[RMDB]
RNA sequence: GGGAACGACUCGAGUAGAGUCGAAAAUCAUUCUUCAACACCAGCCUUCUGUGCAGGCUACCCUACCCAUCAAGACGCCGCGGGAUACGAGUGUAUGUUUUGUAGGACACUUGCAGGUAAGUAAUACUGCAUUAGUCAUAUUCGUAUGACUAAUGCAAAAAGAAACAACAACAACAAC
Reactivity to 2A3 in 0.01 (KOAc 150mM, MgCl2 10mM, bicine 150mM(pH8.5), 24C), signal-to-noise 9, nucleotides 027 to 126: u080c020a050u060u040c020u160u120c050a060a040c040a060c050c020a010g030c010c000u070u040c030u070g080u080g020c040a020g030g000c010u050a060c000c000c010u030a030c010c010c010a050u060c050a070a020g070a050c030g000c030c000g030c040g020g040g000a030u060a090c050g020a050g050u050g010u040a060u070g110u040u060u080u080g100u050a040g020g060a010c010a000c060u010u040g000c020a030g050g040u100a070a020g040u030a080a090u060a190c060
Reactivity to DMS in 0.01 (KOAc 150mM, MgCl2 10mM, bicine 150mM(pH8.5), 24C), signal-to-noise 7, nucleotides 027 to 126: u020c090a130u000u010c020u000u010c050a100a100c160a070c100c070a100g000c020c010u000u010c050u010g010u020g010c070a030g000g010c020u010a040c040c010c030u000a070c050c010c020a070u030c070a070a070g000a100c070g010c040c030g000c020g000g010g010a080u030a080c090g000a060g020u010g010u010a050u010g000u010u010u010u010g020u010a050g010g000a080c090a040c050u000u010g010c050a060g000g000u020a040a070g010u020a070a080u010a050c130
Structure probing data (2A3 and DMS) for a 177-nucleotide construct. Reactivities are given for positions 27 through 126. DMS (dimethyl sulfate) methylates the pairing face of unpaired adenines and cytosines.